Chemical mapping of a 207-nucleotide RNA with 2A3 and DMS. The RNA was probed in 150 mM KOAc, 10 mM MgCl2 and 150 mM bicine (pH 8.5) at 24 C. Source: RMDB library OK3TST, as collected in RNAgym. The 2A3 profile rests on 1,692 reads. In probing experiments dimethyl sulfate is read out at A N1 and C N3, which are open when not base-paired.

RNA sequence: GGGAACGACUCGAGUAGAGUCGAAAAAAGACAGUUUUCAAAGCCCCACGUGUUACCACUCCAACCCCAGUAUCUGCUAGUGUCCUCGUUCAGCCCAGUGGGCCUCUUUGACUCUCCUCAAAUGUGCUAACACUCCUGCUUGAGGACCUCUGCUGUAGGACCUAUAUUAUUUCGAUAAUAUAGGUCCAAAAGAAACAACAACAACAAC
Reactivity to 2A3 in 0.01 (KOAc 150mM, MgCl2 10mM, bicine 150mM(pH8.5), 24C), signal-to-noise 2, nucleotides 027 to 156: a010a000g100a020c030a030g020u050u060u080u100c110a170a080a030g010c020c020c010c000a020c040g030u030g000u020u020a010c000c010a020c000u000c040c050a070a040c020c020c000c010a010g020u060a120u080c050u050g040c040u050a010g060u010g000u150c000c030u010c000g020u040u050c020a020g010c000c080c000a010g030u060g010g030g000c000c010u040c060u040u030u030g030a040c010u030c020u060c140c010u030c000a020a060a080u090g030u100g080c030u030a110a040c020a010c040u020c030c020u050g020c040u030u050g000a000g000g000a010c000c000u010c020u070g020c010u120g050u190a050
Reactivity to DMS in 0.01 (KOAc 150mM, MgCl2 10mM, bicine 150mM(pH8.5), 24C), signal-to-noise 2, nucleotides 027 to 156: a040a130g010a090c040a120g020u010u000u000u000c040a040a200a180g040c040c020c010c020a050c090g030u000g020u000u010a040c040c010a090c030u010c020c010a040a140c060c010c020c020a170g020u000a070u000c030u020g000c070u000a070g030u000g010u000c010c010u000c010g020u000u000c040a110g010c020c030c000a110g060u000g020g000g000c020c020u010c050u010u010u010g000a090c030u000c050u000c040c010u010c050a050a060a060u000g010u000g000c040u000a060a130c030a060c010u000c030c000u000g040c070u020u000g000a080g010g000a040c030c020u000c030u010g010c010u010g020u000a240